Notes:
Source: RMDB library M2PK50, as collected in RNAgym. Structure probing data (DMS and 2A3) for a 177-nucleotide construct. For DMS the reverse transcriptase was MarathonRT. Conditions: 150 mM KOAc, 10 mM MgCl2 and 150 mM bicine (pH 8.5), 24 C. For 2A3, 6,183 sequencing reads were counted. The DMS profile rests on 3,052 reads.
RNA sequence: GGGAACGACUCGAGUAGAGUCGAAAAGUGAGAACGUUCGCGUUCUCACAAAUACUAAGACCGAAGCUUAGAUGCCCGACACUUCCCUUGGAAACGGCACAAAAAUGAUAGGUUUCGACCUAUCAAAUCAAGUUGUAAUCUUCGGAUUACAACUUGAAAAAGAAACAACAACAACAAC
Reactivity to DMS in 0.01 (KOAc 150mM, MgCl2 10mM, bicine 150mM(pH8.5), 24C), signal-to-noise 4, nucleotides 027 to 126: g010u000g000a010g000a010a010c000g010u000u010c220g030c010g000u000u000c010u000c000a000c000a010a070a050u000a120c080u000a020a040g000a140c020c050g020a050a090g000c020u000u010a020g020a160u000g010c010c000c020g010a150c060a060c100u000u000c010c000c020u010u010g010g010a050a120a120c180g000g010c040a060c260a040a040a070a070a100u010g000a000u000a000g000g010u000u000u010c230g010a020c000c000u010a010u000c010a010a070a150
Reactivity to 2A3 in 0.01 (KOAc 150mM, MgCl2 10mM, bicine 150mM(pH8.5), 24C), signal-to-noise 4, nucleotides 027 to 126: g010u000g010a000g000a010a020c010g010u030u060c200g010c000g100u000u000c010u000c000a000c000a000a000a000u100a010c010u020a020a020g010a020c010c080g100a060a010g030c010u030u030a020g020a110u110g020c000c010c010g020a020c030a030c040u020u020c000c020c000u010u010g040g030a060a090a010c020g030g040c040a010c040a060a130a020a020a040u090g000a010u010a000g020g020u020u040u100c170g040a010c010c000u010a010u010c010a000a010a000